The record gives the reactivity of an RNA of 170 nucleotides to DMS and 2A3. It was measured as part of the RMDB library 15KLIB. The 2A3 profile rests on 55,812 reads. The RNA was probed in 150 mM KOAc, 10 mM MgCl2 and 150 mM bicine (pH 8.5) at 24 C. For DMS, 104,516 sequencing reads were counted.
[RMDB]
RNA sequence: GGGAACGACUCGAGUAGAGUCGAAAAGCGCUGAGUUGAUUCUUCUUGUUCUUGAGGGCCUUCCUUCGUCGGUGAUCCUGCCUCUCCCUGUCGGUGAAUCCUCCCCUGAGAGGCCUCUUCCUAGGUCGUAGUACAUCGUUCGCGAUGUACAAAAGAAACAACAACAACAAC
Reactivity to DMS in 0.01 (KOAc 150mM, MgCl2 10mM, bicine 150mM(pH8.5), 24C), signal-to-noise 7, nucleotides 027 to 129: g040c040g000c010u000g000a100g030u000u000g000a090u000u000c060u020u010c060u010u000g000u020u010c040u010u000g010a140g010g020g020c060c050u000u000c040c000u020u010c070g010u010c040g040g010u010g010a040u000c050c010u000g000c000c010u030c030u000c020c030c030u020g020u020c070g040g030u030g000a090a110u030c010c030u000c010c030c000c020u000g000a070g000a110g000g000c030c020u000c070u000u010c020c020u030a060g010g010u010c060g030u000a120
Reactivity to 2A3 in 0.01 (KOAc 150mM, MgCl2 10mM, bicine 150mM(pH8.5), 24C), signal-to-noise 3, nucleotides 027 to 129: g070c080g040c090u070g030a020g080u050u040g070a160u080u020c010u050u010c020u050u080g050u080u030c020u030u080g030a080g010g030g000c010c010u050u050c030c000u030u040c020g080u010c030g010g050u040g020a060u040c010c030u050g030c000c000u020c010u030c000c010c000u040g070u080c060g010g040u080g070a030a030u030c000c000u020c000c000c000c010u040g050a100g000a030g060g010c000c000u000c000u010u010c000c010u000a040g030g030u020c040g020u020a060